[RMDB]
RNA sequence: GGGAACGACUCGAGUAGAGUCGAAAAGAUAUGGACGAUCUAUUAGACGAAGAACAAAGUCGGAAACGACUUUGGGAGUCUGAAUAGAGUCGUCCUAAGUCAAAACCGCUAAGUUCGCUUAGCGGAACAGUAGCAAGUACUUCGGUACUUGCUACUGAAAAGAAACAACAACAACAAC
Reactivity to DMS in 0.01 (KOAc 150mM, MgCl2 10mM, bicine 150mM(pH8.5), 24C), signal-to-noise 2, nucleotides 027 to 126: g060a030u020a300u000g010g040a000c000g000a170u000c000u000a020u000u000a030g000a010c010g000a130a180g040a160a180c010a000a000a010g000u000c000g010g000a110a060a300c020g000a000c000u000u000u000g000g000g000a100g000u000c010u000g030a020a000u000a010g010a010g000u000c010g010u000c000c000u000a010a070g000u000c060a140a070a210a130c000c000g010c000u000a020a000g000u010u020c300g030c020u000u000a000g020c010g000g020a030a040
Reactivity to 2A3 in 0.01 (KOAc 150mM, MgCl2 10mM, bicine 150mM(pH8.5), 24C), signal-to-noise 2, nucleotides 027 to 126: g030a040u090a070u190g020g000a000c000g030a030u020c010u010a010u010u000a040g000a070c170g240a300a100g060a090a040c000a030a010a000g000u000c000g000g010a030a090a040c010g000a000c000u010u010u020g000g010g000a010g010u000c020u010g120a000a000u010a000g020a030g250u070c010g000u000c010c000u010a050a000g050u000c030a000a010a130a230c000c000g000c000u000a000a000g040u020u110c110g060c200u010u000a000g000c000g020g000a040a000
The data come from the RNA Mapping Database (RMDB), library TTRDES. An RNA of 177 nucleotides, treated with DMS and 2A3 and read out base by base. The reactions ran in a buffer of 150 mM KOAc, 10 mM MgCl2 and 150 mM bicine (pH 8.5), at 24 C. The DMS profile rests on 1,679 reads. Reactivities are given for positions 27 through 126. The 2A3 profile rests on 2,920 reads.